[RMDB]
RNA sequence: GGGAACGACUCGAGUAGAGUCGAAAAUCCGCAGCAUUCGUGCUGCGGAACUUACCGAGGUUGUUGCUCGGUAUAACAACAAAACCCUUGGAAAGAAGGGAAACAAUGAGCUAUUCGUAGCUCAUAAUAACUAAAACAGGUUCGCCUGUUUUAGUUAAAAAGAAACAACAACAACAAC
Reactivity to 2A3 in 0.01 (KOAc 150mM, MgCl2 10mM, bicine 150mM(pH8.5), 24C), signal-to-noise 2, nucleotides 027 to 126: u000c000c000g000c000a000g020c000a010u050u070c130g090u030g010c000u000g010c000g000g000a000a010c010u030u020a000c010c010g010a000g070g020u070u060g020u060u070g080c000u000c010g000g000u000a010u020a010a000c010a000a000c010a020a090a020a020c010c000c020u020u010g180g300a140a100a050g030a000a030g010g000g000a090a010a010c050a020a040u010g000a000g010c010u040a040u080u130c150g110u060a010g000c000u000c000a000u000a000a000
Reactivity to DMS in 0.01 (KOAc 150mM, MgCl2 10mM, bicine 150mM(pH8.5), 24C), signal-to-noise 6, nucleotides 027 to 126: u000c000c000g030c000a010g000c000a030u000u010c180g020u000g010c000u000g010c000g000g000a000a020c090u000u000a040c000c000g000a010g000g010u000u000g010u000u000g010c010u000c010g000g000u000a010u010a070a090c120a100a100c160a060a080a120a140c010c000c000u000u000g010g000a120a120a140g010a030a010g000g010g010a050a060a050c140a070a020u000g000a010g010c000u000a030u000u010c210g030u000a010g000c000u000c000a000u000a040a110
This 177-nucleotide RNA was probed chemically with 2A3 and DMS. Reactivities are given for positions 27 through 126. 2A3 adducts were read by reverse transcription with SuperScript II with manganese. Source: RMDB library M2PK50, as collected in RNAgym. Conditions: 150 mM KOAc, 10 mM MgCl2 and 150 mM bicine (pH 8.5), 24 C.